This 307-nucleotide RNA was probed chemically with DMS and 2A3. The 2A3 profile rests on 7,786 reads. Values cover nucleotides 27 to 266. The data come from the RNA Mapping Database (RMDB), library POS240. The reactions ran in a buffer of 150 mM KOAc, 10 mM MgCl2 and 150 mM bicine (pH 8.5), at 24 C. The DMS profile rests on 3,580 reads.

[RMDB]
RNA sequence: GGGAACGACUCGAGUAGAGUCGAAAACGCAAUUGCUUCGGCAAUUGCGACGUCUGGACGUGAGUCCAGACGACGAUAUCUACGGAUAUCGAAGGCAUAACGUACGCGUUAUGCCAAUAGAUCCAUAAAUUAGAUAAAGGCACCGUACGCGGUGCCAGACUAAUCGUGAGAUUAGUCACCGAAUCUUCGGAUUCGGAGUAAUAGCUACGGCUAUUACAGCGACCGUUCGCGGUCGCAGGCGCGGCACCGUCCGCGGAACAAACGGUACUGUGACAUUCGUGUCACAGAAAAGAAACAACAACAACAAC
Reactivity to DMS in 0.01 (KOAc 150mM, MgCl2 10mM, bicine 150mM(pH8.5), 24C), signal-to-noise 1, nucleotides 027 to 266: c020g000c000a000a010u020u000g030c000u000u020c230g020g020c000a000a000u030u000g010c010g000a010c010g040u000c000u000g000g000a030c010g010u040g000a180g000u010c000c000a020g000a000c060g020a080c210g020a170u000a020u000c010u000a030c300g010g000a090u000a000u000c000g000a050a020g010g000c010a000u010a000a000c020g020u010a100c170g010c030g000u000u000a000u020g020c000c010a000a000u000a090g000a010u000c000c000a120u000a020a100a190u010u010a020g000a040u000a060a150a210g000g000c000a020c020c000g060u000a050c130g030c000g050g030u040g000c000c000a000g000a020c000u000a010a010u020c000g010u020g000a120g010a030u000u000a000g000u000c000a050c000c000g000a020a000u000c000u010u060c160g030g020a030u000u000c000g000g010a230g000u010a030a000u000a000g040c020u000a060c130g080g000c000u000a000u000u000a000c010a080g000c020g050a020c070c000g080u000u000c150g070c020g020g000u000c010g060c000a020g000g000c030g000c000g000g000c060a120c020c000g000u000c000c000g010c010g000g040a010a230c110a000a010a010c000g000g000u020a180
Reactivity to 2A3 in 0.01 (KOAc 150mM, MgCl2 10mM, bicine 150mM(pH8.5), 24C), signal-to-noise 4, nucleotides 027 to 266: c010g000c000a000a010u000u000g000c000u050u060c190g100g000c000a000a000u000u000g000c000g000a020c010g000u000c000u000g000g000a000c010g080u120g110a080g010u010c000c000a000g000a000c000g000a000c000g050a050u040a040u090c020u040a050c100g030g000a000u010a020u020c010g020a060a020g000g000c000a010u010a020a000c020g000u040a010c300g030c000g130u000u000a000u010g000c000c000a000a000u010a000g000a010u000c000c000a020u130a010a120a020u140u100a020g050a060u090a120a210a160g000g000c010a010c000c010g030u070a020c150g020c000g070g000u010g000c070c150a020g000a000c000u000a000a000u000c010g030u070g110a090g000a020u010u010a000g000u000c000a010c020c000g000a000a000u000c010u050u110c230g090g000a000u000u000c000g000g000a040g000u010a000a000u000a000g000c000u030a030c280g130g000c000u000a010u000u010a010c010a010g000c000g000a000c020c000g030u070u110c240g050c020g130g000u000c010g000c000a010g070g060c010g000c000g000g000c020a010c020c010g170u190c010c010g030c000g040g040a010a010c000a000a000a000c000g010g000u010a050